[RMDB]
RNA sequence: GGGAACGACUCGAGUAGAGUCGAAAAGCCACUGCCUUCGGGCAGUGGCAAAAGAAAGCGAUUUCUGACCGCUUUUUAGUCAGAAAAAGAUCGAAAGUUCAAAAACGUCAGACUUCGGUCUGACGAACAAGUAAGUAGAGUUCGCUCUACUUACUUGAAAAGAAACAACAACAACAAC
Reactivity to 2A3 in 0.01 (KOAc 150mM, MgCl2 10mM, bicine 150mM(pH8.5), 24C), signal-to-noise 5, nucleotides 027 to 126: g020c010c000a010c010u000g020c020c000u040u080c220g050g010g020c010a000g000u000g010g010c000a000a000a000a010g020a060a120a000g010c000g030a030u040u010u010c010u010g010a000c000c000g030c060u210u060u010u030u070a020g000u010c000a000g090a020a040a000a010a000g080a040u190c110g050a160a100a040g060u110u120c060a070a040a030a100a090c020g000u000c000a000g000a010c010u010u090c260g060g010u000c000u000g010a000c000g000a020a000
Reactivity to DMS in 0.01 (KOAc 150mM, MgCl2 10mM, bicine 150mM(pH8.5), 24C), signal-to-noise 4, nucleotides 027 to 126: g000c000c000a000c010u000g030c000c000u010u020c220g030g010g020c000a020g020u000g020g040c010a000a010a070a130g000a080a150a030g010c000g010a200u000u000u000c000u000g010a020c000c010g010c050u000u020u010u010u020a110g000u010c010a010g000a010a030a140a120a110g010a040u010c050g010a100a080a130g000u000u000c050a100a070a080a070a150c030g010u000c010a000g000a010c000u000u020c170g020g000u000c000u000g000a000c000g000a030a070